RNA sequence: GGGAACGACUCGAGUAGAGUCGAAAACGCAAGACAGUGAGUGGACGGAAGAAAUCCCCUUCCCACCUCCCCACUGUCCACUCACUGUCUUCCUAAGAGGAAAUAUAAAUCGGGGGUGGGAAGGGGACCACGCAUUUAUGUUCGCAUAAAUGCGUGGAAAAGAAACAACAACAACAAC
Reactivity to 2A3 in 0.01 (KOAc 150mM, MgCl2 10mM, bicine 150mM(pH8.5), 24C), signal-to-noise 3, nucleotides 027 to 126: c110g060c070a070a010g020a000c000a020g000u000g000a000g000u010g000g010a000c000g030g000a040a000g080a180a140a060u110c000c010c000c010u010u000c010c030c000a000c020c010u080c090c030c010c040a080c050u020g000u000c000c000a000c000u000c010a000c000u010g010u000c000u000u000c010c000u020a040a010g020a090g160g230a020a100a010u300a030u050a020a100a050u150c070g000g000g000g000g000u000g000g000g000a000a000g000g010g000g000a000
Chemical mapping of a 177-nucleotide RNA with 2A3.
Values cover nucleotides 27 to 126.
For 2A3, 2,715 sequencing reads were counted.
It was measured as part of the RMDB library OK1LIB.